An RNA of 177 nucleotides, treated with 2A3 and DMS and read out base by base. DMS adducts were read by reverse transcription with MarathonRT. It was measured as part of the RMDB library OK1LIB. DMS (dimethyl sulfate) methylates the pairing face of unpaired adenines and cytosines.
RNA sequence: GGGAACGACUCGAGUAGAGUCGAAAAGGCAGGAAUAGAAUGGGCCGAAUCUAGUGUGACACUGCAGGCCAAAAGCUAUUUUUGUUUGGCACAAGGCCUGGUGGCUGAAACGGCUGUGUUCACCAAGCAAUAUUAAAUUUUUCGAAAUUUAAUAUUGAAAAGAAACAACAACAACAAC
Reactivity to 2A3 in 0.01 (KOAc 150mM, MgCl2 10mM, bicine 150mM(pH8.5), 24C), signal-to-noise 3, nucleotides 027 to 126: g050g000c030a000g020g050a080a020u060a120g040a020a020u070g050g020g010c000c000g010a020a010u020c020u030a010g040u030g020u050g070a010c010a000c020u140g000c020a000g010g000c000c000a040a060a020a000g010c020u020a140u060u080u020u100u150g190u080u090u090g020g000c000a050c020a060a030g010g000c020c000u010g000g000u020g000g010c010u030g010a050a030a000c040g000g000c000u010g020u020g010u030u020c020a020c030c000a020a000g030
Reactivity to DMS in 0.01 (KOAc 150mM, MgCl2 10mM, bicine 150mM(pH8.5), 24C), signal-to-noise 6, nucleotides 027 to 126: g000g020c030a070g000g010a100a080u020a050g010a060a060u010g010g010g010c010c010g000a040a210u010c030u010a050g020u020g020u030g010a110c020a030c020u010g020c050a030g020g010c000c000a030a070a130a100g000c020u010a010u020u010u030u040u030g000u010u010u020g000g000c000a060c110a110a210g000g010c010c000u000g000g030u020g000g000c030u000g010a030a040a200c060g000g010c010u000g010u010g000u000u000c020a090c020c050a090a090g010